[RMDB]
RNA sequence: GGGAACGACUCGAGUAGAGUCGAAAAAAGUUGCACCAGGUACGGAUACCAGACGUUGCCAAACAGGGUGACAUGAGGAUCACCCAUGUACUGUCCCUUGGCAGCCGUACCUGGUGCUGGAGAAAAAGUACCAUAGUGCAUUCGUGCACUAUGGUACAAAAGAAACAACAACAACAAC
Reactivity to 2A3 in 0.01 (KOAc 150mM, MgCl2 10mM, bicine 150mM(pH8.5), 24C), signal-to-noise 2, nucleotides 027 to 126: a000a000g200u120u050g000c000a000c000c000a000g000g000u000a000c000g040g000a040u050a110c030c000a010g010a060c080g110u100u100g040c040c020a070a070a050c030a070g000g010g010u000g000a000c020a080u300g160a110g070g080a120u020c010a060c030c040c010a000u020g010u010a060c080u140g040u020c000c020c010u000u010g010g010c000a000g000c000c000g000u000a000c000c000u000g000g000u000g000c000u000g010g000a060g100a000a130a000a030a000
Reactivity to DMS in 0.01 (KOAc 150mM, MgCl2 10mM, bicine 150mM(pH8.5), 24C), signal-to-noise 3, nucleotides 027 to 126: a080a080g020u020u000g010c010a000c000c000a010g010g000u000a000c000g010g000a120u000a080c130c060a080g010a070c160g010u000u000g010c050c020a030a030a040c030a060g000g010g030u000g000a020c020a150u000g020a080g030g000a230u000c040a020c000c000c000a050u010g000u000a020c130u010g000u000c000c030c030u000u000g000g000c020a140g010c000c000g000u000a000c010c000u000g000g000u000g000c000u000g000g010a100g000a050a050a060a110a090
This 177-nucleotide RNA was probed chemically with 2A3 and DMS. It was measured as part of the RMDB library M2PK90. The RNA was probed in 150 mM KOAc, 10 mM MgCl2 and 150 mM bicine (pH 8.5) at 24 C. DMS adducts were read by reverse transcription with MarathonRT.